Chemical mapping of a 207-nucleotide RNA with DMS and 2A3. The reactions ran in a buffer of 150 mM KOAc, 10 mM MgCl2 and 150 mM bicine (pH 8.5), at 24 C. Source: RMDB library OK3TST, as collected in RNAgym. The 2A3 profile rests on 795 reads. For DMS, 3,321 sequencing reads were counted. Reactivities are given for positions 27 through 156.

[RMDB]
RNA sequence: GGGAACGACUCGAGUAGAGUCGAAAAAGGUGCAAAGAUCAUGGUCUUGAUUAGGGACAUGAGUCUGAUAUUUCACAGACUGUGUUUGGGGUUUCCUUGAAACAUCUCAGCAGGGAAGUUCAGUAGGCAAAUGGAUGUGGGUCUUGCCUGGAGAUAAAUAUACCGAGGUAUUCGUACCUCGGUAUAUAAAAGAAACAACAACAACAAC
Reactivity to DMS in 0.01 (KOAc 150mM, MgCl2 10mM, bicine 150mM(pH8.5), 24C), signal-to-noise 2, nucleotides 027 to 156: a050g010g050u000g020c030a090a100a100g000a060u020c010a020u000g010g010u010c000u010u010g030a180u000u000a150g000g000g000a040c010a050u010g000a090g030u000c000u010g020a110u000a070u000u000u000c070a120c000a040g020a040c010u010g000u010g020u010u000u000g020g020g000g000u010u020u000c020c030u020u000g000a140a070a040c110a120u000c010u000c040a120g040c000a110g000g010g000a060a110g000u010u010c040a100g020u020a070g040g010c030a030a070a060u000g020g000a050u010g020u000g040g040g010u010c040u010u000g020c010c030u000g000g000a090g010a090u000a070a110
Reactivity to 2A3 in 0.01 (KOAc 150mM, MgCl2 10mM, bicine 150mM(pH8.5), 24C), signal-to-noise 2, nucleotides 027 to 156: a020g030g000u050g030c040a030a120a020g020a040u090c040a070u070g100g060u050c060u090u110g070a110u100u230a130g000g050g020a010c050a070u100g070a060g040u000c000u000g010a070u050a130u140u290u080c190a100c020a010g000a000c000u000g000u000g010u080u110u100g040g000g000g000u000u060u000c010c000u000u020g040a060a050a030c030a100u060c000u000c040a040g010c000a020g040g000g090a080a010g000u060u030c060a060g040u070a030g050g040c040a030a040a110u070g030g030a060u100g020u090g040g000g000u010c010u020u030g050c020c030u010g000g020a060g000a040u090a070a060